[RMDB]
Structure probing data (DMS and 2A3) for a 177-nucleotide construct. Values are in units of 0.01, from 0 to 300, in steps of 10. The 2A3 profile rests on 1,343 reads. The RNA was probed in 150 mM KOAc, 10 mM MgCl2 and 150 mM bicine (pH 8.5) at 24 C. For DMS, 1,650 sequencing reads were counted.
RNA sequence: GGGAACGACUCGAGUAGAGUCGAAAAUUAAGAUCUAUGGGAUAUGCACUGACUGGAGCGGUUCAAACUUUAUCUCAAAUAUCAGAUAUCAAUGAUGAAAAGUUACAGCAAGGGAUAUAUUUGUUAACGUGAGAGAAUAGUUCGCUAUUCUCUCACGAAAAGAAACAACAACAACAAC
Reactivity to DMS in 0.01 (KOAc 150mM, MgCl2 10mM, bicine 150mM(pH8.5), 24C), signal-to-noise 2, nucleotides 027 to 126: u000u000a050a080g000a080u000c060u010a170u020g000g000g020a050u010a050u000g010c100a060c090u000g000a090c060u000g000g010a050g000c020g010g000u000u000c030a030a070a110c080u000u000u000a040u020c000u000c050a040a060a130u020a100u000c090a040g000a140u000a050u010c180a050a070u000g020a130u000g000a040a060a070a040g010u000u000a050c080a040g000c060a030a060g000g010g000a060u000a060u000a080u000u010u010g010u020u000a070a150
Reactivity to 2A3 in 0.01 (KOAc 150mM, MgCl2 10mM, bicine 150mM(pH8.5), 24C), signal-to-noise 2, nucleotides 027 to 126: u020u030a090a000g040a040u050c010u090a090u160g020g040g030a020u020a000u090g040c050a030c080u020g070a060c010u050g040g050a090g050c000g000g020u020u070c050a000a020a050c020u130u100u020a110u010c020u000c040a050a080a030u200a020u070c040a030g050a080u050a000u130c060a060a050u060g020a010u050g030a060a090a020a030g000u000u050a030c020a020g030c010a040a020g050g030g000a030u030a010u020a090u170u080u060g090u090u080a090a030